[RMDB]
This 207-nucleotide RNA was probed chemically with 2A3.
For 2A3, 1,171 sequencing reads were counted.
For 2A3 the reverse transcriptase was SuperScript II with manganese.
The reactions ran in a buffer of 150 mM KOAc, 10 mM MgCl2 and 150 mM bicine (pH 8.5), at 24 C.

RNA sequence: GGGAACGACUCGAGUAGAGUCGAAAAGAUAUGGAACUGAUGAGCCAUCGAUCUAUACUAAGUAAUAUAUUCGGAAACGAAUAUAUGAACUGUAUAGGGAGGCUCGCAGUUCCUAAGUCAAAACGCGUAAUAGUUCCUUCGGGAACUAUUACGCGAACUGUUGACAAGACUUCGGUCUUGUCAACAGAAAAGAAACAACAACAACAAC
Reactivity to 2A3 in 0.01 (KOAc 150mM, MgCl2 10mM, bicine 150mM(pH8.5), 24C), signal-to-noise 1, nucleotides 027 to 156: g020a000u030a010u040g000g020a010a020c020u020g030a200u070g010a300g010c020c020a090u300c050g020a010u040c010u000a000u000a030c050u130a180a060g010u020a040a000u000a000u000a000u000u010c000g000g000a020a000a010c020g000a000a000u000a000u000a000u010g010a060a070c020u020g000u000a000u000a010g010g000g020a000g000g000c000u000c010g060c000a000g010u010u000c000c000u000a000a010g000u000c000a010a000a080a130c000g000c000g010u000a000a000u000a000g000u000u000c020c000u060u090c300g070g000g000a000a000c000u000a000u000u000a000c000g000c000g000a000a000